Source information: An RNA of 177 nucleotides, treated with 2A3 and DMS and read out base by base. Values cover nucleotides 27 to 126. 2A3 adducts were read by reverse transcription with SuperScript II with manganese. The RNA was probed in 150 mM KOAc, 10 mM MgCl2 and 150 mM bicine (pH 8.5) at 24 C.

RNA sequence: GGGAACGACUCGAGUAGAGUCGAAAAUCCAGACACUCAGCCACUGGGCGCGGGCAAGCUUCAUCUGCAGUCAGCGAUCGUGGACACCGGGGGUCUAGCGGUAGUCAGGCCAGUGACAGUGAGGGACUCACCAAGGGUAGUUCGCUACCCUUGGUGAAAAAGAAACAACAACAACAAC
Reactivity to 2A3 in 0.01 (KOAc 150mM, MgCl2 10mM, bicine 150mM(pH8.5), 24C), signal-to-noise 2, nucleotides 027 to 126: u050c010c000a030g060a010c070a030c030u050c040a020g060c040c000a040c060u060g060g000g030c030g000c030g010g030g000c060a090a090g020c040u190u130c030a210u010c040u090g040c010a040g030u050c010a000g000c000g070a110u110c110g170u110g030g020a030c000a030c030c040g070g000g030g000g060u070c060u030a030g080c020g020g000u020a050g060u080c050a020g070g000c010c000a020g020u000g050a030c020a060g050u050g110a070g000g020g030a050c050
Reactivity to DMS in 0.01 (KOAc 150mM, MgCl2 10mM, bicine 150mM(pH8.5), 24C), signal-to-noise 3, nucleotides 027 to 126: u000c010c010a160g010a110c060a110c040u000c020a110g010c030c040a040c040u000g020g010g000c020g020c030g000g020g020c020a080a120g000c040u000u000c170a060u010c090u010g020c060a130g000u000c040a060g010c040g010a060u000c110g030u010g010g000a080c060a070c110c010g000g000g000g010g010u010c040u000a080g020c070g000g010u000a080g000u000c040a050g000g000c010c020a040g020u000g000a060c040a070g010u000g010a110g010g010g000a130c110